[RMDB]
RNA sequence: GGGAACGACUCGAGUAGAGUCGAAAAACGCACCUUGACAGGAUGUCCUUUAGACCCAUCUACCAUGAGUUGAUACGAAGGUUGCUGGAAAUGUUCAAGACGGUGUUGACACGUCAAAUGAUGGUAAAGGCAAGAAUUAGUUCGCUAAUUCUUGCCUAAAAGAAACAACAACAACAAC
Reactivity to DMS in 0.01 (KOAc 150mM, MgCl2 10mM, bicine 150mM(pH8.5), 24C), signal-to-noise 2, nucleotides 027 to 126: a060c150g000c040a050c020c000u000u000g000a100c100a060g010g000a100u010g000u010c040c040u010u010u010a130g000a040c030c020c000a130u020c050u010a040c030c020a100u000g000a180g000u000u020g010a050u040a110c080g020a130a080g010g010u000u000g000c010u010g010g000a090a040a080u010g030u000u030c020a090a000g010a070c040g010g020u000g000u000u000g000a030c070a020c050g010u000c050a010a100a070u010g000a050u000g020g000u030a060a100
Reactivity to 2A3 in 0.01 (KOAc 150mM, MgCl2 10mM, bicine 150mM(pH8.5), 24C), signal-to-noise 3, nucleotides 027 to 126: a000c020g020c020a090c000c000u010u090g020a010c080a100g020g060a140u110g110u050c010c030u000u160u180a010g000a020c000c010c000a010u000c060u070a010c020c010a250u060g000a000g140u010u030g020a000u000a150c040g000a040a020g020g000u000u000g030c020u010g010g010a010a120a000u130g000u180u140c080a090a000g010a040c050g000g080u040g000u030u090g060a030c060a030c160g000u000c060a070a100a040u210g070a040u070g050g030u140a150a150

Chemical mapping of a 177-nucleotide RNA with DMS and 2A3. For DMS, 3,920 sequencing reads were counted. DMS adducts were read by reverse transcription with MarathonRT. The RNA was probed in 150 mM KOAc, 10 mM MgCl2 and 150 mM bicine (pH 8.5) at 24 C. The data come from the RNA Mapping Database (RMDB), library OK1LIB. As a SHAPE reagent, 2A3 marks flexible, mostly unpaired nucleotides at the ribose 2'-OH.